[RMDB]
RNA sequence: GGGAACGACUCGAGUAGAGUCGAAAAUCGUCUUCUUUAGGAAUAAAAGCAACAGUUGCAGGCUUGGGAGGCUAUACAAUCACGCAAGUUAUCUCAACUGGAAUGAGUCGUGCGAUUAUGGCUACGGAUGUAAGCCUAAAUUCGUUUAGGCUUACAUAAAAGAAACAACAACAACAAC
Reactivity to DMS in 0.01 (KOAc 150mM, MgCl2 10mM, bicine 150mM(pH8.5), 24C), signal-to-noise 9, nucleotides 027 to 126: u000c070g010u010c060u000u000c030u000u000u000a090g010g010a120a080u000a050a060a090a150g010c050a080a080c040a100g010u000u000g010c130a060g000g000c110u000u000g010g010g010a090g010g010c050u000a070u000a140c190a070a090u010c100a070c100g010c070a060a030g010u000u000a080u010c050u000c030a040a060c060u000g000g010a060a060u000g000a060g010u000c060g020u000g010c040g010a110u000u000a060u000g010g010c030u000a060c140g010g010
Reactivity to 2A3 in 0.01 (KOAc 150mM, MgCl2 10mM, bicine 150mM(pH8.5), 24C), signal-to-noise 9, nucleotides 027 to 126: u050c010g040u000c020u070u000c000u040u110u080a080g040g070a110a090u120a120a130a030a010g050c020a000a050c010a050g020u040u050g050c050a010g030g030c020u040u020g020g050g010a040g030g000c010u040a040u040a180c060a040a090u090c050a010c080g090c020a050a000g020u080u080a200u090c030u000c020a020a050c030u050g050g070a070a060u090g010a030g050u050c030g020u050g040c010g030a020u060u050a060u130g060g000c030u070a030c050g050g010